This 177-nucleotide RNA was probed chemically with 2A3 and DMS. The reactions ran in a buffer of 150 mM KOAc, 10 mM MgCl2 and 150 mM bicine (pH 8.5), at 24 C. For 2A3 the reverse transcriptase was SuperScript II with manganese. For DMS, 1,387 sequencing reads were counted. For 2A3, 504 sequencing reads were counted.
RNA sequence: GGGAACGACUCGAGUAGAGUCGAAAACUGUGCCUCAUUUGUGUCAUAUGGUGGCAUAGAGCAAAAGGCUAUGUCUACGCUCGGUGUUCUCAGUCCAUGAACACUCAGAAUGAUUAGUAGCCUGACAUUUGACCCGGGUAUUCGUACCCGGGUCAAAAAAAGAAACAACAACAACAAC
Reactivity to 2A3 in 0.01 (KOAc 150mM, MgCl2 10mM, bicine 150mM(pH8.5), 24C), signal-to-noise 1, nucleotides 027 to 126: c000u030g000u000g040c000c000u000c030a020u010u120u090g190u040g120u040c070a040u040a020u130g070g030u090g040g000c060a060u060a090g100a040g040c180a000a140a000a030g000g040c030u050a060u110g060u000c000u050a000c160g000c050u000c010g000g040u000g000u050u030c120u000c060a150g190u070c030c080a030u050g000a000a000c000a000c000u030c010a050g000a090a020u050g140a030u040u090a080g040u000a000g050c000c000u030g000a000c020a000
Reactivity to DMS in 0.01 (KOAc 150mM, MgCl2 10mM, bicine 150mM(pH8.5), 24C), signal-to-noise 2, nucleotides 027 to 126: c000u000g030u000g010c010c000u000c020a050u010u000u120g000u000g020u100c130a050u000a020u000g030g000u080g000g040c000a000u000a030g000a090g040c150a040a080a210a000g000g010c000u000a000u000g040u000c000u000a100c300g000c030u000c190g010g010u000g000u000u000c000u040c160a180g000u040c180c290a040u030g020a040a000c000a030c020u000c300a010g020a060a110u000g000a020u030u030a270g010u030a010g000c000c000u020g030a020c240a080
Background: High 2A3 reactivity points to a flexible backbone, as in loops and unpaired stretches.